Structure probing data (2A3) for a 207-nucleotide construct. For 2A3 the reverse transcriptase was SuperScript II with manganese. Source: RMDB library OK3TST, as collected in RNAgym. The 2A3 profile rests on 684 reads.
RNA sequence: GGGAACGACUCGAGUAGAGUCGAAAAGAGCAGACGUCACUGGGGCGAACACGUUCAGGGUCGAAUUGGCUGCUGGCAGAACGUUGGCGAUGGUGGUCGUGUUGGCGAAGGAGAUGGUCACGUUCGAGUAGAUGGUCGCGUUACCGAUCGUCUUCACGACACUGACCUAGUUCGCUAGGUCAGUGUCAAAAGAAACAACAACAACAAC
Reactivity to 2A3 in 0.01 (KOAc 150mM, MgCl2 10mM, bicine 150mM(pH8.5), 24C), signal-to-noise 1, nucleotides 027 to 156: g140a000g060c010a010g050a070c000g090u020c010a010c050u030g050g000g020g070c060g000a080a020c070a010c070g030u100u090c070a010g010g020g130u070c000g030a100a150u160u150g110g000c070u030g000c000u030g020g030c010a010g040a090a010c030g050u030u050g010g000c020g060a060u060g000g100u080g010g030u010c010g010u000g040u100u050g010g000c040g000a030a050g050g000a070g000a010u050g060g010u030c130a020c090g070u150u130c010g020a020g050u040a030g000a060u070g060g020u020c030g050c070g060u030u060a020c000c000g030a000u000c010g000u000c000u000u000c030a040c150
The reactions ran in a buffer of 150 mM KOAc, 10 mM MgCl2 and 150 mM bicine (pH 8.5), at 24 C. Reactivities are given for positions 27 through 156.